[RMDB]
RNA sequence: GGGAACGACUCGAGUAGAGUCGAAAAGAUAUGGAGGUCCAUAAAGGCGAAGAACUCGGAAACGAGGGAGCCUGUGGUACCUCCUAAGUCAAACAUCCCAAGCAAAGUUCGCUUUGCUUGGGAUGAACAGAAAGAGUUUGUUCGCAAACUCUUUCUGAAAAGAAACAACAACAACAAC
Reactivity to 2A3 in 0.01 (KOAc 150mM, MgCl2 10mM, bicine 150mM(pH8.5), 24C), signal-to-noise 2, nucleotides 027 to 126: g010a020u070a030u130g000g010a000g000g020u000c010c020a000u180a160a300a030g000g000c010g200a300a020g030a100a010c010u000c010g010g040a060a040a040c010g000a010g000g030g000a010g000c010c030u010g000u010g000g020u140a050c000c000u000c000c000u010a010a000g000u000c000a010a060a060c000a010u000c000c000c000a000a000g000c000a000a030a000g030u130u190c260g000c200u050u000u010g010c000u000u000g000g020g000a000u010g000a000a000
Reactivity to DMS in 0.01 (KOAc 150mM, MgCl2 10mM, bicine 150mM(pH8.5), 24C), signal-to-noise 4, nucleotides 027 to 126: g010a060u000a300u020g000g000a020g000g000u000c010c000a010u000a070a110a030g020g020c000g000a160a130g000a180a140c010u000c000g000g000a120a160a190c000g000a010g000g010g010a080g020c010c000u010g010u000g000g020u000a020c000c010u000c000c000u000a010a070g020u000c040a110a080a260c030a010u000c000c010c000a000a000g010c010a010a010a010g000u000u010c280g010c010u000u000u000g000c000u010u010g000g000g010a000u000g010a020a170
The record gives the reactivity of an RNA of 177 nucleotides to 2A3 and DMS. For DMS, 3,382 sequencing reads were counted. The reactions ran in a buffer of 150 mM KOAc, 10 mM MgCl2 and 150 mM bicine (pH 8.5), at 24 C. Values cover nucleotides 27 to 126. The 2A3 profile rests on 3,609 reads.